This 207-nucleotide RNA was probed chemically with DMS and 2A3. It was measured as part of the RMDB library M2RFPK.
[RMDB]
RNA sequence: GGGAACGACUCGAGUAGAGUCGAAAAUGGUAGUCCGCCACUCUAAGGGGACGCCUUUAGAAGAAGAGGCUAGGUGGUAUCCCGGUGUGGGAUACUUGGUAAUAUGUAACGCUAAUUGCAUAAGAUUAAAACUUUGCAUACUUCGGUAUGCAAAGAACCUAUAUCUUACCUUCGGGUAAGAUAUAGGAAAAGAAACAACAACAACAAC
Reactivity to DMS in 0.01 (KOAc 150mM, MgCl2 10mM, bicine 150mM(pH8.5), 24C), signal-to-noise 2, nucleotides 027 to 156: u010g000g040u000a030g030u010c020c010g000c030c020a260c050u000c030u000a060a080g030g030g030g010a110c200g000c000c000u000u020u000a110g000a040a110g010a080a090g010a120g020g000c020u000a010g030g020u020g030g010u010a010u010c000c040c050g050g030u010g050u010g000g020g030a000u000a000c030u000u000g030g010u000a050a140u000a060u020g020u010a060a060c110g000c080u000a060a130u000u010g010c030a030u000a040a180g010a200u000u000a040a090a170a110c000u000u000u000g010c000a000u000a000c000u000u000c300g060g000u000a000u000g010c000a010a010a000g010a040a060
Reactivity to 2A3 in 0.01 (KOAc 150mM, MgCl2 10mM, bicine 150mM(pH8.5), 24C), signal-to-noise 3, nucleotides 027 to 156: u100g050g000u040a120g020u020c020c000g080c070c040a080c040u110c040u100a090a110g000g000g010g040a040c040g060c000c000u070u020u060a110g010a140a010g020a060a020g020a010g050g030c050u060a030g000g150u030g020g000u060a010u010c020c000c020g110g130u230g040u180g000g010g000a000u000a010c000u010u080g040g000u090a050a070u040a110u100g030u050a040a000c040g000c170u070a100a070u100u040g000c020a020u050a100a050g020a110u100u190a010a050a020a050c010u010u000u000g000c000a000u000a000c000u000u030c030g050g010u000a000u000g000c010a000a000a000g000a000a000
Source information
As a SHAPE reagent, 2A3 marks flexible, mostly unpaired nucleotides at the ribose 2'-OH. Values cover nucleotides 27 to 156. 2A3 adducts were read by reverse transcription with SuperScript II with manganese.